[RMDB]
RNA sequence: GGGAACGACUCGAGUAGAGUCGAAAAGGAUACCGGGGCAGAUAAAACUUGCAUAGCAGGCAGAGACUGGCCAGCUAAUUGGCCCAUUCACCAAACUGAGAGUUCUCUUCAAGGUUUAGGCAUGGCCUGUGGGGUGGCGCGUAGUAGUCAGCCACUCAUGUAUCUAUCAAUUCGUUGAUAGAUACAUAAAAGAAACAACAACAACAAC
Reactivity to 2A3 in 0.01 (KOAc 150mM, MgCl2 10mM, bicine 150mM(pH8.5), 24C), signal-to-noise 6, nucleotides 027 to 156: g030g010a040u040a090c030c040g000g000g000g000c030a030g020a100u130a110a130a050a060c070u070u100g020c010a050u060a050g010c010a010g030g000c020a010g020a010g030a130c060u030g020g000c020c020a010g020c090u140a150a140u120u060g010g000c000c000c020a040u070u100c020a020c020c020a000a050a050c030u040g010a000g000a010g100u240u070c080u040c000u170u080c050a050a020g020g000u010u070u080a040g020g030c050a030u050g050g010c010c010u030g020u070g000g010g000g010u020g010g000c020g000c020g020u100a100g050u010a010g020u100c040a010g000c020c000a010c010u010c000
Reactivity to DMS in 0.01 (KOAc 150mM, MgCl2 10mM, bicine 150mM(pH8.5), 24C), signal-to-noise 4, nucleotides 027 to 156: g010g000a120u000a120c050c030g000g010g010g030c030a090g020a160u000a050a070a110a130c070u000u000g010c030a160u000a160g030c040a040g010g020c010a110g020a170g020a070c080u010g000g010c010c010a060g020c120u000a040a170u010u000g010g000c010c000c050a070u000u000c040a040c020c010a000a060a060c040u000g000a300g000a070g010u010u010c110u010c090u000u000c030a070a300g000g010u000u000u000a030g010g010c020a060u000g010g010c000c010u010g000u000g010g020g010g010u000g000g030c010g000c050g020u000a160g010u000a090g000u000c020a230g040c000c010a050c020u000c030

This 207-nucleotide RNA was probed chemically with 2A3 and DMS. High 2A3 reactivity points to a flexible backbone, as in loops and unpaired stretches. Values cover nucleotides 27 to 156. 2A3 adducts were read by reverse transcription with SuperScript II with manganese.